Conditions: 150 mM KOAc, 10 mM MgCl2 and 150 mM bicine (pH 8.5), 24 C. Chemical mapping of a 207-nucleotide RNA with 2A3. The 2A3 profile rests on 532 reads.
[RMDB]
RNA sequence: GGGAACGACUCGAGUAGAGUCGAAAACUUUACUUUGAAUCCGUCAGUUGAUGUGAACACCCAGUUGUCCACGCUCAACACAUUGGGUUUAAUUGACCGAACUUAUGCUCUGGACAUUUUGAGCUCCAAAACGCGUUGGAAAUGUACAACUAGUUGGUAGCAACUUCAGAUUCGUCUGAAGUUGCUAAAAAGAAACAACAACAACAAC
Reactivity to 2A3 in 0.01 (KOAc 150mM, MgCl2 10mM, bicine 150mM(pH8.5), 24C), signal-to-noise 2, nucleotides 027 to 156: c000u100u160u200a040c020u050u140u160g030a060a040u040c060c030g020u020c030a090g000u070u040g030a050u050g030u030g030a080a000c040a060c000c110c030a080g000u040u000g000u020c050c020a020c020g050c020u100c010a000a000c020a040c040a200u070u190g010g000g020u030u000u040a040a000u000u080g050a020c040c030g040a040a090c020u160u090a080u300g000c020u000c070u070g030g050a040c030a060u050u050u000u040g050a010g000c050u130c020c060a040a070a030a070c150g030c010g020u030u040g010g000a010a110a010u110g020u030a030c000a140a130c030u020a040g080u090u170g060g030